[RMDB]
RNA sequence: GGGAACGACUCGAGUAGAGUCGAAAACGAACUGAACGAUGAUGCAGCAACGAUCGAUCUUCUCAGUUAUUGCGUGAAAAAGAAUUUCGAACGUGUCUCGCUGCUCACACGUCUCGAAGAUCACCCAGACGUAGCUACGUUUCGACGUAGCUACGUCAAAAGAAACAACAACAACAAC
Reactivity to 2A3 in 0.01 (KOAc 150mM, MgCl2 10mM, bicine 150mM(pH8.5), 24C), signal-to-noise 3, nucleotides 027 to 126: c000g010a040a000c020u070g040a050a000c020g040a060u030g000a010u290g000c010a000g000c000a010a010c020g020a050u040c010g020a000u040c000u030u000c010u020c000a070g080u120u150a200u170u260g140c180g040u190g090a110a010a020a000a030g030a000a000u040u010u000c020g010a030a000c000g010u020g140u050c080u040c210g000c020u020g010c000u040c000a020c030a020c010g000u040c030u010c090g040a070a040g010a070u050c030a050c060c000c020a000
Reactivity to DMS in 0.01 (KOAc 150mM, MgCl2 10mM, bicine 150mM(pH8.5), 24C), signal-to-noise 2, nucleotides 027 to 126: c110g010a070a070c110u010g000a050a010c080g000a160u000g020a070u010g010c010a000g020c000a150a070c030g000a050u000c020g000a020u010c100u000u000c020u030c030a080g030u000u000a040u030u000g030c190g000u010g000a010a070a150a120a050g000a020a020u000u000u000c000g010a000a060c020g040u000g020u020c260u000c180g010c000u000g020c030u000c010a010c040a030c020g000u000c130u000c000g030a120a050g000a070u040c050a140c000c000c010a130
This 177-nucleotide RNA was probed chemically with 2A3 and DMS. It was measured as part of the RMDB library OK2TRN. For 2A3 the reverse transcriptase was SuperScript II with manganese. The reactions ran in a buffer of 150 mM KOAc, 10 mM MgCl2 and 150 mM bicine (pH 8.5), at 24 C. Values are in units of 0.01, from 0 to 300, in steps of 10. Reactivities are given for positions 27 through 126. For 2A3, 2,089 sequencing reads were counted. As a SHAPE reagent, 2A3 marks flexible, mostly unpaired nucleotides at the ribose 2'-OH.